RNA sequence: GGGAACGACUCGAGUAGAGUCGAAAACCGCGGACCUGCAAAGAAGAAGAUAGGGCCAGAGGGGGAGUGAGCCUCGUCGUCGACGAAGGGGUGCACUCCGAGUCCCUGAGCUGGUCGACGUCCAGCUGUAUAAUCGUAGGUUCGCCUACGAUUAUACAAAAGAAACAACAACAACAAC
Reactivity to 2A3 in 0.01 (KOAc 150mM, MgCl2 10mM, bicine 150mM(pH8.5), 24C), signal-to-noise 3, nucleotides 027 to 126: c010c000g000c050g040g000a070c030c010u070g020c080a160a080a090g150a140a010g040a070a000g050a260u190a120g070g000g000c010c010a020g140a020g060g020g000g000g000a000g000u000g010a010g000c010c010u000c000g030u010c010g030u040c060g100a290c040g000a050a020g000g000g020g010u040g040c000a010c000u000c000c010g010a020g040u040c010c000c010u030g040a070g040c010u010g020g000u080c070g040a040c040g000u020c020c000a040g030c030u010
Reactivity to DMS in 0.01 (KOAc 150mM, MgCl2 10mM, bicine 150mM(pH8.5), 24C), signal-to-noise 4, nucleotides 027 to 126: c020c010g010c160g020g010a050c020c000u000g000c130a050a100a140g010a110a080g010a110a100g000a080u010a060g000g010g000c010c010a060g000a080g010g000g000g000g000a020g030u000g010a150g010c000c010u000c000g000u000c010g010u000c220g010a130c040g010a040a040g010g000g010g010u000g010c000a000c020u000c000c000g000a060g010u010c010c010c000u000g010a090g010c010u000g000g000u000c040g020a090c080g010u010c010c030a040g010c040u020